Source: RMDB library TTRDEL, as collected in RNAgym.
The record gives the reactivity of an RNA of 177 nucleotides to DMS and 2A3.
2A3 adducts were read by reverse transcription with SuperScript II with manganese.
The reactions ran in a buffer of 150 mM KOAc, 10 mM MgCl2 and 150 mM bicine (pH 8.5), at 24 C.
RNA sequence: GGGAACGACUCGAGUAGAGUCGAAAAGAUAUGGAAAUGAAGAAGAGCGAUAAGCUGCUUCGGAAACGAACAGCUUUUGACGCUUGUAAAGUUUCCUAAGUCGCACCAGUCACUUCGGUGACUGGAACCGUUAUAUGUCCUUCGGGACAUAUAACGGAAAAGAAACAACAACAACAAC
Reactivity to DMS in 0.01 (KOAc 150mM, MgCl2 10mM, bicine 150mM(pH8.5), 24C), signal-to-noise 3, nucleotides 027 to 126: g010a020u000a300u020g010g000a020a020a010u010g000a040a210g020a220a300g010a010g010c010g030a180u020a010a010g030c000u000g010c300u000u000c000g030g000a070a080a080c010g010a000a030c000a010g000c020u010u000u000u010g030a210c080g010c010u000u000g010u000a010a110a300g000u000u000u000c000c000u000a050a200g020u000c020g000c300a200c000c000a000g030u000c000a010c010u000u020c170g040g010u000g000a010c000u000g010g010a010a050
Reactivity to 2A3 in 0.01 (KOAc 150mM, MgCl2 10mM, bicine 150mM(pH8.5), 24C), signal-to-noise 2, nucleotides 027 to 126: g010a030u080a020u130g010g010a000a030a020u010g000a120a300g010a000a010g000a020g000c010g050a040u000a110a010g010c010u020g030c180u020u010c010g000g000a010a030a010c000g000a000a000c010a000g020c010u090u100u090u150g230a110c060g000c030u000u020g000u010a000a000a010g000u010u000u000c000c000u020a090a020g060u030c010g000c080a020c010c010a000g020u030c000a010c010u040u180c300g100g010u010g010a000c030u010g000g000a020a000